Background
An RNA of 177 nucleotides, treated with 2A3 and DMS and read out base by base.
RNA sequence: GGGAACGACUCGAGUAGAGUCGAAAAGAUAUGGACCGUGAACGUUGAAACCACUGACUCGGAAACGAGUUUGGUGGAGUUCGUCCUAAGUCAAACGGAGGAACAGCGUUCGCGCUGUUCCUCCGAACCUUAAGUUCUUGUUCGCAAGAACUUAAGGAAAAGAAACAACAACAACAAC
Reactivity to 2A3 in 0.01 (KOAc 150mM, MgCl2 10mM, bicine 150mM(pH8.5), 24C), signal-to-noise 3, nucleotides 027 to 126: g050a020u120a070u180g050g000a020c110c230g300u150g110a020a020c030g040u220u300g090a210a100a090c010c000a010c000u010g000a010c010u000c020g010g050a060a060a060c010g020a010g020u020u080u220g080g000u010g010g010a030g000u030u020c000g000u010c000c000u070a200a050g080u080c060a090a050a060c030g000g000a000g010g000a000a020c030a000g020c000g070u100u160c290g010c000g000c060u000g000u000u010c010c010u020c000c000g000a000a010
Reactivity to DMS in 0.01 (KOAc 150mM, MgCl2 10mM, bicine 150mM(pH8.5), 24C), signal-to-noise 4, nucleotides 027 to 126: g010a090u000a260u010g010g000a030c030c300g010u010g020a010a010c030g010u000u010g010a150a170a150c010c000a000c070u000g000a010c000u000c000g020g000a070a070a170c000g000a010g010u000u000u010g040g000u000g000g000a070g010u000u000c010g000u000c000c000u000a080a070g010u000c030a050a090a250c010g000g010a010g000g000a010a000c020a010g020c010g040u010u020c210g030c000g000c000u000g000u000u000c000c010u000c010c010g000a010a040
For DMS, 5,978 sequencing reads were counted.